[RMDB]
RNA sequence: GGGAACGACUCGAGUAGAGUCGAAAACGAUAGAGAGGAAUCUGUUUGCUUGAUUUCUAUCGAAGUAUUAAAACAAGCAUUCUUGCAUGUUCCUCGUUGGAUAGAGGUGUAUGCAACUUCUAAUGAACCCAUACUAGCCAUUCGUGGCUAGUAUGGGAAAAGAAACAACAACAACAAC
Reactivity to 2A3 in 0.01 (KOAc 150mM, MgCl2 10mM, bicine 150mM(pH8.5), 24C), signal-to-noise 2, nucleotides 027 to 126: c010g050a030u140a060g070a010g000a000g030g100a050a150u040c040u110g040u020u010u020g020c000u030u000g040a130u140u040u030c020u040a040u040c020g000a100a020g080u140a110u100u190a060a030a020a010c010a020a000g020c030a010u000u060c020u080u040g000c000a010u020g000u000u000c000c010u010c010g020u060u120g120g050a100u080a140g010a000g000g020u030g000u020a040u030g000c000a030a010c030u060u050c000u070a110a100u130g080a040a050
Reactivity to DMS in 0.01 (KOAc 150mM, MgCl2 10mM, bicine 150mM(pH8.5), 24C), signal-to-noise 1, nucleotides 027 to 126: c050g000a060u010a040g020a080g030a040g010g010a100a110u000c070u020g020u020u000u000g010c000u000u000g020a150u000u010u000c060u030a080u000c060g010a050a140g030u000a090u000u020a030a100a070a130c010a000a000g030c000a010u000u000c020u000u010g000c130a020u000g000u000u000c000c000u000c020g020u000u000g000g010a130u000a070g000a010g010g020u010g010u000a020u000g000c080a020a020c130u000u020c030u000a100a180u000g010a130a190

This 177-nucleotide RNA was probed chemically with 2A3 and DMS.
The reactions ran in a buffer of 150 mM KOAc, 10 mM MgCl2 and 150 mM bicine (pH 8.5), at 24 C.
Source: RMDB library OK2TST, as collected in RNAgym.
For 2A3 the reverse transcriptase was SuperScript II with manganese.
High 2A3 reactivity points to a flexible backbone, as in loops and unpaired stretches.
For 2A3, 1,473 sequencing reads were counted.